[RMDB]
RNA sequence: GGGAACGACUCGAGUAGAGUCGAAAAAGAGUUUGACUUUUUCAUAUGAUGGGUUACGUGGCGCAAUACGUAAAGCUAAAGAUUAUGGUUUUACUGUUUUUGUGUGCACAGACAACUCUGCUAACACUGAGAGCGCAGUUCGCUGCGCUCAAAAGAAACAACAACAACAAC
Reactivity to DMS in 0.01 (KOAc 150mM, MgCl2 10mM, bicine 150mM(pH8.5), 24C), signal-to-noise 3, nucleotides 027 to 129: a000g000a030g050u000u000u000g010a000c000u000u000u050u070u000c050a130u010a120u040g010a050u040g030g010g010u000u010a120c150g020u040g040g000c000g060c010a020a030u010a030c110g000u020a000a000a000g010c040u030a030a070a110g060a220u070u030a090u010g000g030u000u000u000u000a010c010u040g080u000u000u050u000u050g020u000g030u030g060c000a080c000a130g060a130c140a210a010c040u020c010u020g040c210u040a060a090c150a100c000u040g020a130
Reactivity to 2A3 in 0.01 (KOAc 150mM, MgCl2 10mM, bicine 150mM(pH8.5), 24C), signal-to-noise 3, nucleotides 027 to 129: a000g050a020g000u050u090u130g050a050c000u000u080u040u110u040c040a110u180a010u300g080a020u060g010g000g030u000u030a050c080g000u080g000g000c000g000c000a000a000u000a000c000g000u000a000a000a000g000c000u030a130a040a060g160a100u120u090a070u240g000g000u020u000u010u010a040c020u030g060u030u060u030u010u000g000u020g020u030g160c010a000c000a000g000a020c040a010a000c000u000c020u020g020c040u030a090a010c040a020c090u030g000a020